[RMDB]
This 177-nucleotide RNA was probed chemically with 2A3 and DMS. The DMS profile rests on 41,268 reads. 2A3 adducts were read by reverse transcription with SuperScript II with manganese. The data come from the RNA Mapping Database (RMDB), library OK2TRN.

RNA sequence: GGGAACGACUCGAGUAGAGUCGAAAAUCAUAAAGAAAUGUCUCAUAGUAGAAUCAUUUGUCAUGUGAGGUCGAAGGUCACAGACUGUGCAGCCCUAGAUCCACUCUGAUACACAGUAACCUACAGCGAUAGUAACUGCUUUCGAGCAGUUAUUGUCAAAAGAAACAACAACAACAAC
Reactivity to 2A3 in 0.01 (KOAc 150mM, MgCl2 10mM, bicine 150mM(pH8.5), 24C), signal-to-noise 9, nucleotides 027 to 126: u060c000a010u120a050a100a020g020a000a070a020u040g020u000c000u000c020a110u110a050g070u030a010g030a050a040u090c010a030u030u030u090g030u010c010a020u030g010u000g010a090g010g010u000c010g010a020a000g000g010u030c010a000c000a020g260a170c150u070g010u010g000c030a030g040c000c000c000u000a000g000a000u000c000c000a010c000u030c040u030g010a010u030a040c070a000c010a050g030u020a030a040c000c010u030a020c030a030g040c020
Reactivity to DMS in 0.01 (KOAc 150mM, MgCl2 10mM, bicine 150mM(pH8.5), 24C), signal-to-noise 9, nucleotides 027 to 126: u010c050a080u010a070a090a130g000a050a060a060u000g000u000c010u000c020a130u000a130g010u000a030g010a080a080u010c050a070u000u000u000g010u000c040a040u000g010u000g000a080g010g010u000c020g010a120a300g000g010u000c030a030c030a090g000a100c160u000g010u000g000c150a080g010c010c010c010u000a260g000a030u000c010c020a030c010u000c100u000g000a050u000a050c140a050c120a060g000u000a070a090c090c010u000a040c100a100g010c170